[RMDB]
Source: RMDB library TTRDES, as collected in RNAgym. Structure probing data (DMS and 2A3) for a 177-nucleotide construct. Values cover nucleotides 27 to 126. The reactions ran in a buffer of 150 mM KOAc, 10 mM MgCl2 and 150 mM bicine (pH 8.5), at 24 C.
RNA sequence: GGGAACGACUCGAGUAGAGUCGAAAAGAUAUGGAUCGCGCAGAUAUAUGUGUAACAAGGAGCGUUGAAAGCUGAUCGGAAACGAUCAGCUGGAGCUCCCGCCCACAUAUGUAGCGAUCCUAAGUCACUUGCUCAUAGGGUUCGCCCUAUGAGCAAGAAAAGAAACAACAACAACAAC
Reactivity to DMS in 0.01 (KOAc 150mM, MgCl2 10mM, bicine 150mM(pH8.5), 24C), signal-to-noise 2, nucleotides 027 to 126: g000a060u010a300u010g000g010a030u000c010g060c000g010c270a100g030a100u000a050u000a000u000g000u000g010u010a070a110c160a200a080g010g010a020g010c000g000u020u000g010a080a160a080g010c000u000g010a000u010c010g000g000a110a050a200c010g030a010u000c000a000g000c050u010g070g000a030g010c020u010c000c000c010g000c300c070c000a020c000a010u000a000u010g000u000a080g000c010g000a000u000c000c000u010a020a170g000u000c050a150
Reactivity to 2A3 in 0.01 (KOAc 150mM, MgCl2 10mM, bicine 150mM(pH8.5), 24C), signal-to-noise 1, nucleotides 027 to 126: g030a020u070a060u180g000g010a030u030c030g050c080g000c190a030g070a300u130a010u000a050u180g050u000g140u210a210a210c080a050a120g040g000a020g000c020g160u300u060g020a000a000a030g000c000u040g010a000u030c020g050g050a090a080a050c000g000a000u020c050a000g020c000u020g000g000a000g040c030u000c000c000c000g070c000c040c000a020c000a020u030a020u000g010u080a060g020c000g000a000u000c010c000u000a010a030g000u040c030a000